[RMDB]
RNA sequence: GGGAACGACUCGAGUAGAGUCGAAAACUACCAACUUUAGCAAUUUCCGCCAAGGCUCCAGAGAGACAGGGUCUCCUUUCGGUUAGCAUUUGAUUUCUGCUACUUGUUGCUAACUCUGAUUUCUGGGUUUUCAAGAUGCAUAUCAGUUUAAACCUAGCUCUAAUAAAUCUUUCGAGAUUUAUUAGAGAAAAGAAACAACAACAACAAC
Reactivity to 2A3 in 0.01 (KOAc 150mM, MgCl2 10mM, bicine 150mM(pH8.5), 24C), signal-to-noise 3, nucleotides 027 to 156: c060u140a100c020c020a070a100c040u100u150u100a030g020c030a060a140u090u080u060c080c060g000c020c030a050a040g040g020c040u010c050c010a020g050a000g000a010g040a120c050a070g110g070g030u010c040u060c020c030u050u090u120c040g010g020u020u050a000g000c030a080u060u020u200g060a050u010u140u120c030u070g040c010u010a020c030u070u170g020u030u020g020c010u020a020a020c000u030c050u140g050a070u000u030u020c010u000g020g000g020u030u010u010u050c020a030a070g020a090u050g040c040a030u060a070u300c080a050g060u130u150u140a060a010a010c000c010u020a010g000
This 207-nucleotide RNA was probed chemically with 2A3. For 2A3, 1,301 sequencing reads were counted. The RNA was probed in 150 mM KOAc, 10 mM MgCl2 and 150 mM bicine (pH 8.5) at 24 C.